[RMDB]
RNA sequence: GGGAACGACUCGAGUAGAGUCGAAAAAAGGGUAAUACCGAGGAUUGGCGUACCGCCAAGUUUUUUCACGGUUGACCAGCAAACACCGACAGGUAAAAAGAAGAAAAUCGCUUCGCCAAUCAGCCAAUAUUAGUACCUAUUUCGAUAGGUACUAAUAAAAAGAAACAACAACAACAAC
Reactivity to DMS in 0.01 (KOAc 150mM, MgCl2 10mM, bicine 150mM(pH8.5), 24C), signal-to-noise 9, nucleotides 027 to 126: a080a090g010g000g010u000a120a080u010a180c020c010g010a140g010g010a240u000u000g010g010c010g010u000a070c210c130g010c060c070a030a050g000u000u000u010u000u010u000c030a150c060g010g000u000u000g010a090c060c040a100g000c130a070a090a070c090a050c030c010g010a130c230a070g010g020u010a030a050a070a090a100g010a060a050g000a030a040a060a060u000c170g020c040u000u000c030g010c000c010a030a040u000c040a100g010c040c060a060a150
Reactivity to 2A3 in 0.01 (KOAc 150mM, MgCl2 10mM, bicine 150mM(pH8.5), 24C), signal-to-noise 4, nucleotides 027 to 126: a000a000g110g000g000u080a090a030u060a120c010c020g020a080g040g040a030u010u010g010g010c010g010u030a070c090c020g010c020c010a030a060g010u050u010u000u000u020u090c050a050c030g020g000u040u080g070a110c030c020a010g040c050a070a110a010c030a030c040c010g080a050c070a080g000g110u130a140a090a040a010a020g050a050a000g020a040a070a000a050u050c030g000c030u040u020c010g000c000c000a000a040u030c020a000g050c010c010a080a050

Record summary: Chemical mapping of a 177-nucleotide RNA with DMS and 2A3. For DMS the reverse transcriptase was MarathonRT.